RNA sequence: GGGAACGACUCGAGUAGAGUCGAAAAAGAUAUGGAGUCGCUAGAGUGCGAAGAACUGACAUCACAGUGGUGUCGGAAACGACACCAUCACAGUGUCAGGGAGCACGAUUGGCGACUCCUAAGUCAACACACCAGGUAACUUCGGUUACCUGGUGUGAAAAGAAACAACAACAACAAC
Reactivity to DMS in 0.01 (KOAc 150mM, MgCl2 10mM, bicine 150mM(pH8.5), 24C), signal-to-noise 2, nucleotides 027 to 126: a150g000a030u010a300u000g020g000a000g050u010c010g080c000u000a030g000a300g090u000g000c000g000a160a240g040a170a230c040u000g000a010c000a020u000c090a170c300a300g000u000g010g010u000g020u000c000g020g000a030a000a070c010g020a000c000a010c000c000a010u000c070a090c200a300g010u000g000u000c000a020g000g000g010a120g000c000a010c000g030a130u000u000g000g060c000g000a010c000u000c020c000u000a000a030g000u000c010a140a180
Structure probing data (DMS) for a 177-nucleotide construct. The RNA was probed in 150 mM KOAc, 10 mM MgCl2 and 150 mM bicine (pH 8.5) at 24 C.